[RMDB]
RNA sequence: GGGAACGACUCGAGUAGAGUCGAAAAUUACUAAAGAAGAUGCCUCUAUCCAAGGUGCGCGAUGUAUGGAUUGUGGAACGCCGUUUUGUCAAACCGGACAACAGUAUGGUAGGGAAACAAUAGGUUGAUGUGAUAGUUAGUUCGCUAACUAUCACAUAAAAGAAACAACAACAACAAC
Reactivity to DMS in 0.01 (KOAc 150mM, MgCl2 10mM, bicine 150mM(pH8.5), 24C), signal-to-noise 9, nucleotides 027 to 126: u020u030a130c100u010a050a110a110g010a080a080g010a080u010g000c050c010u010c040u020a080u010c070c050a090a110g020g030u010g010c050g010c050g020a050u030g010u010a050u010g000g010a060u020u010g020u010g010g020a200a110c090g000c010c010g000u010u010u010u010g010u000c070a040a080a110c120c100g000g010a060c050a060a060c190a050g000u010a020u020g000g010u010a050g000g000g010a160a070a050c120a050a070u010a080g000g020u010u010g000
Reactivity to 2A3 in 0.01 (KOAc 150mM, MgCl2 10mM, bicine 150mM(pH8.5), 24C), signal-to-noise 7, nucleotides 027 to 126: u120u060a070c080u090a070a120a030g130a050a010g070a070u130g040c000c010u000c040u060a070u030c020c020a020a030g050g000u040g050c030g010c030g070a050u100g050u090a060u080g040g050a030u040u110g010u040g080g030a060a010c040g000c010c000g030u020u020u060u070g090u050c090a100a100a120c050c030g090g030a010c030a060a030c010a060g110u100a090u140g060g050u080a210g070g000g010a040a040a020c060a030a080u070a100g110g000u020u040g030